Chemical mapping of a 177-nucleotide RNA with 2A3 and DMS. 2A3 adducts were read by reverse transcription with SuperScript II with manganese. For DMS, 1,138 sequencing reads were counted. For 2A3, 2,846 sequencing reads were counted.
[RMDB]
RNA sequence: GGGAACGACUCGAGUAGAGUCGAAAAGAUAUGGAUGACGCUUUUGACGUUCAUUGGUCGGAAACGACCACCUCGGGAACGAUAAGCCUCAUCCUAAGUCAAAGUUCUUCCGUUCGCGGAAGAACAACGUUCAAACUUGGUUCGCCAAGUUUGAACGAAAAGAAACAACAACAACAAC
Reactivity to 2A3 in 0.01 (KOAc 150mM, MgCl2 10mM, bicine 150mM(pH8.5), 24C), signal-to-noise 2, nucleotides 027 to 126: g040a010u040a050u140g020g000a000u000g000a010c020g050c040u130u130u050u260g270a140c100g020u010u010c020a050u070u140g000g010u000c020g000g020a060a050a000c010g000a020c000c000a030c000c050u220c200g280g060g030a040a010c040g100a100u060a090a010g000c000c000u000c010a010u000c000c000u010a110a010g000u000c060a140a000a050g000u020u000c000u000u000c020c000g020u010u040c300g000c000g070g000a000a000g010a000a000c000a000a010
Reactivity to DMS in 0.01 (KOAc 150mM, MgCl2 10mM, bicine 150mM(pH8.5), 24C), signal-to-noise 2, nucleotides 027 to 126: g030a070u000a260u010g010g000a000u010g030a010c300g000c000u000u000u000u000g000a140c080g000u010u000c020a230u010u000g010g000u010c000g010g000a110a090a170c010g020a010c000c000a010c250c160u000c160g000g000g010a010a020c020g020a120u000a020a000g010c000c110u020c020a040u000c000c000u000a020a140g000u000c020a070a050a120g000u000u000c000u000u000c000c000g000u000u010c190g010c050g010g010a010a000g020a000a000c020a030a100